[RMDB]
This 177-nucleotide RNA was probed chemically with 2A3 and DMS.
For DMS the reverse transcriptase was MarathonRT.
The reactions ran in a buffer of 150 mM KOAc, 10 mM MgCl2 and 150 mM bicine (pH 8.5), at 24 C.
RNA sequence: GGGAACGACUCGAGUAGAGUCGAAAAGAGUAAGAGCAUAGCGAUAGGGGGAGAUGCUAGGAGUUAGGGGAGACCGAAGCGAGGAGGAAAGCAAAGAAAGCAACGGGGCUAGCCGGUAGGUGUUCCGCUACUGUUAUAUCUUCGGAUAUAACAGUAGAAAAGAAACAACAACAACAAC
Reactivity to 2A3 in 0.01 (KOAc 150mM, MgCl2 10mM, bicine 150mM(pH8.5), 24C), signal-to-noise 3, nucleotides 027 to 126: g090a020g050u130a080a040g010a010g070c030a050u070a040g060c040g110a070u120a190g020g000g000g030g000a050g000a010u080g000c020u030a030g010g040a060g020u070u070a040g000g020g000g000a040g030a010c030c010g020a020a000g050c040g010a040g010g030a020g010g040a100a020a010g020c040a050a040a070g060a050a100a000g020c010a030a030c040g020g000g000g000c010u020a010g020c020c010g030g010u040a040g020g020u040g040u070u020c020c000g000
Reactivity to DMS in 0.01 (KOAc 150mM, MgCl2 10mM, bicine 150mM(pH8.5), 24C), signal-to-noise 5, nucleotides 027 to 126: g010a080g010u010a070a090g000a080g010c050a080u000a090g010c060g000a110u010a090g010g010g000g000g000a070g010a070u010g020c070u000a100g010g010a060g010u010u000a080g010g010g000g000a130g010a070c060c050g000a080a070g010c110g010a070g000g000a070g010g000a040a040a070g000c100a050a050a090g000a040a060a080g010c070a050a100c100g010g000g000g000c050u000a080g010c050c020g010g000u000a040g000g020u000g010u000u010c020c040g010